[RMDB]
RNA sequence: GGGAACGACUCGAGUAGAGUCGAAAAGCGUACUACUAGUUGUCAGUCGCGCAUUAACGCAAAAACCCGCGAAACCGUCCCAAAUAGGACGGGAGGGUAACAAAUCGACUUGGAUUUACUAGUAUCGCAAAGCAGUGUCGGUUCGCCGACACUGCAAUCAUCACUGAACGUUCGCGUUCAGUGAUGAAAAAGAAACAACAACAACAAC
Reactivity to DMS in 0.01 (KOAc 150mM, MgCl2 10mM, bicine 150mM(pH8.5), 24C), signal-to-noise 1, nucleotides 027 to 156: g020c000g010u020a070c200u010a050c030u000a020g010u000u000g000u000c040a070g030u000c020g000c090g000c100a150u000u010a130a140c080g040c050a110a190a090a090a030c000c000c020g000c160g000a120a040a240c000c000g020u020c000c000c060a010a140a190u000a120g030g000a020c000g010g010g000a000g000g000g000u000a010a160c150a080a080a230u000c000g020a030c020u000u030g040g000a070u000u020u000a050c010u000a000g000u000a050u000c080g020c000a100a060a180g000c000a000g060u000g010u020c020g030g000u000u000c190g060c000c000g020a000c000a000c010u000g010c000a010a020
Reactivity to 2A3 in 0.01 (KOAc 150mM, MgCl2 10mM, bicine 150mM(pH8.5), 24C), signal-to-noise 3, nucleotides 027 to 156: g020c010g080u100a080c040u010a000c000u000a020g000u010u030g030u040c010a010g020u010c000g040c010g020c080a020u250u300a280a030c120g030c060a050a070a030a050a060c010c020c020g020c090g120a140a030a020c000c000g000u000c030c020c010a270a300a170u300a110g000g000a000c000g000g040g000a120g010g000g000u030a020a050c060a050a090a110u140c000g010a000c010u080u190g180g010a050u290u230u170a040c000u000a000g030u030a030u300c000g000c040a080a000a000g020c000a000g000u000g010u000c000g050g040u060u120c180g040c120c000g010a000c020a000c000u050g000c000a000a000